[RMDB]
RNA sequence: GGGAACGACUCGAGUAGAGUCGAAAAGCAAGGGAUUAGGAUCCUUGGGUCCACACGGUGUCCUGAUCGCUUCUAUCGAGUAACGCCUAAGAGGUUUUCACGUAGCACUUGAGAAGAAGACCGUGUGACAAGGAAGGUCGUUCGCGAUCUUUCUUGUAAAAGAAACAACAACAACAAC
Reactivity to 2A3 in 0.01 (KOAc 150mM, MgCl2 10mM, bicine 150mM(pH8.5), 24C), signal-to-noise 9, nucleotides 027 to 126: g100c040a010a020g070g020g030a090u170u210a090g090g050a060u100c000c000u020u030g070g010g040u050c040c010a010c000a000c010g010g010u040g040u060c010c010u070g040a170u100c060g010c050u010u000c010u020a060u030c010g000a000g020u040a060a040c050g030c020c010u110a180a060g090a210g120g040u080u050u100u160c110a100c090g060u090a030g050c050a010c030u020u040g020a010g010a150a020g020a020a000g020a030c000c000g010u010g000u020g010
Reactivity to DMS in 0.01 (KOAc 150mM, MgCl2 10mM, bicine 150mM(pH8.5), 24C), signal-to-noise 9, nucleotides 027 to 126: g010c060a030a030g000g000g000a120u020u040a120g010g010a150u030c010c000u010u010g010g020g010u020c080c010a030c020a020c010g000g000u010g000u000c020c010u000g010a120u020c090g010c050u000u000c010u000a160u010c020g000a020g010u010a080a080c110g010c040c030u010a110a110g010a120g010g010u010u010u020u010c100a160c100g010u010a070g010c150a050c030u010u000g000a040g000a110a090g000a030a030g000a060c010c010g000u000g010u000g000